The record gives the reactivity of an RNA of 207 nucleotides to 2A3. The RNA was probed in 150 mM KOAc, 10 mM MgCl2 and 150 mM bicine (pH 8.5) at 24 C. Reactivities are given for positions 27 through 156.

[RMDB]
RNA sequence: GGGAACGACUCGAGUAGAGUCGAAAAAGAUGUUUCGACAUCUGUUCAACCUUUGUGAUUCACAGCAUGUGGGAGCGAGGAUCACCCAUUGGGUGAUUGGCCUCGCAUCGAUCACAUGUCACAGAUCACUCUGGUGCCUUUUCAUGUUCGCAUGAAACCCUUACGCUACCUUCGGGUAGCGUAAGGGAAAAGAAACAACAACAACAAC
Reactivity to 2A3 in 0.01 (KOAc 150mM, MgCl2 10mM, bicine 150mM(pH8.5), 24C), signal-to-noise 1, nucleotides 027 to 156: a000g050a010u080g100u140u240u300c270g220a020c000a020u010c030u020g070u190u250c100a020a030c000c020u000u000u000g000u010g000a010u160u070c070a030c050a000g010c000a000u000g000u010g020g000g000a050g000c000g000a000g000g010a000u000c030a000c000c000c090a300u240u300g050g000g020u030g000a080u170u100g190g080c000c000u000c000g000c000a010u050c000g030a030u060c010a000c000a000u000g100u050c020a030c040a050g020a000u030c000a000c000u000c010u000g030g020u050g000c000c010u000u100u010u010c060a070u070g050u050u030c110g020c170a000u010g040a040a080a050